Description: An RNA of 177 nucleotides, treated with 2A3 and DMS and read out base by base. Conditions: 150 mM KOAc, 10 mM MgCl2 and 150 mM bicine (pH 8.5), 24 C. DMS adducts were read by reverse transcription with MarathonRT. The 2A3 profile rests on 1,501 reads.

[RMDB]
RNA sequence: GGGAACGACUCGAGUAGAGUCGAAAAGCACCUUCACACAGCAGUGAGGCUGAGCCCUUCAGAGCACAGCACAGCACUGGUGGGAGGGUAAGGAUGUGCCUGGAAGGUGCCAGAGGCCCAGAAGCCUCCCCUGAUAUGACUUCGGUCAUAUCAGGGGAAAAGAAACAACAACAACAAC
Reactivity to 2A3 in 0.01 (KOAc 150mM, MgCl2 10mM, bicine 150mM(pH8.5), 24C), signal-to-noise 2, nucleotides 027 to 126: g020c000a010c000c000u010u010c010a080c020a030c020a080g200c010a010g050u040g020a040g070g040c030u010g040a010g030c040c000c000u100u120c220a160g000a000g130c020a020c000a030g030c010a000c020a180g110c010a030c000u070g070g070u050g020g090g060a120g050g030g020u030a050a030g120g060a140u190g050u050g150c000c010u000g040g000a020a020g020g010u010g000c000c000a110g000a100g170g000c000c000c020a030g050a040a000g030c010c010u020
Reactivity to DMS in 0.01 (KOAc 150mM, MgCl2 10mM, bicine 150mM(pH8.5), 24C), signal-to-noise 1, nucleotides 027 to 126: g020c040a000c010c000u040u010c000a300c040a210c050a020g000c020a020g010u000g070a080g010g010c010u000g000a100g010c000c010c090u010u010c220a150g000a090g000c000a060c000a040g020c000a100c130a060g000c040a040c040u000g000g000u000g020g010g010a220g020g000g040u010a010a110g020g020a110u000g040u000g030c010c040u000g020g030a020a000g060g010u020g030c040c020a050g000a030g000g010c000c040c070a230g020a080a130g040c060c000u010